The record gives the reactivity of an RNA of 177 nucleotides to 2A3 and DMS. The reactions ran in a buffer of 150 mM KOAc, 10 mM MgCl2 and 150 mM bicine (pH 8.5), at 24 C. For DMS, 1,791 sequencing reads were counted. DMS adducts were read by reverse transcription with MarathonRT. Reactivities are given for positions 27 through 126. Source: RMDB library RFM100, as collected in RNAgym.
RNA sequence: GGGAACGACUCGAGUAGAGUCGAAAAGGCACACAGUCACCCGCCCGAGUGAACGUCACCAACUCGGCUGGAUUCCAAGCUGGUUGCCUGUCCUACGCUCAGCGCAACAACCGCAGACAUGCGACGGAGUGUUCUGACCUUUCGAGGUCAGAACACUAAAAGAAACAACAACAACAAC
Reactivity to 2A3 in 0.01 (KOAc 150mM, MgCl2 10mM, bicine 150mM(pH8.5), 24C), signal-to-noise 3, nucleotides 027 to 126: g010g000c010a020c000a010c020a020g020u100c020a030c050c020c010g020c050c040c030g000a000g020u020g060a220a080c010g060u050c030a020c090c030a090a080c000u010c000g000g020c000u040g000g040a120u220u100c070c020a000a030g000c000u000g050g040u060u060g000c010c000u000g020u040c000c000u050a040c040g000c000u130c040a030g000c030g010c060a010a140c020a040a090c080c000g000c040a020g060a090c060a090u090g020c050g010a050c040g040g000
Reactivity to DMS in 0.01 (KOAc 150mM, MgCl2 10mM, bicine 150mM(pH8.5), 24C), signal-to-noise 2, nucleotides 027 to 126: g000g010c000a060c030a080c000a060g000u000c070a170c020c020c020g000c300c020c000g000a010g040u010g000a250a210c010g000u010c040a080c070c060a170a030c000u030c010g070g000c030u030g010g000a040u010u060c090c080a140a080g000c020u000g000g000u000u000g000c000c000u030g000u020c000c000u000a100c110g010c030u000c000a060g000c100g000c040a070a160c240a090a210c100c000g000c020a000g000a080c190a040u020g000c000g000a120c030g000g010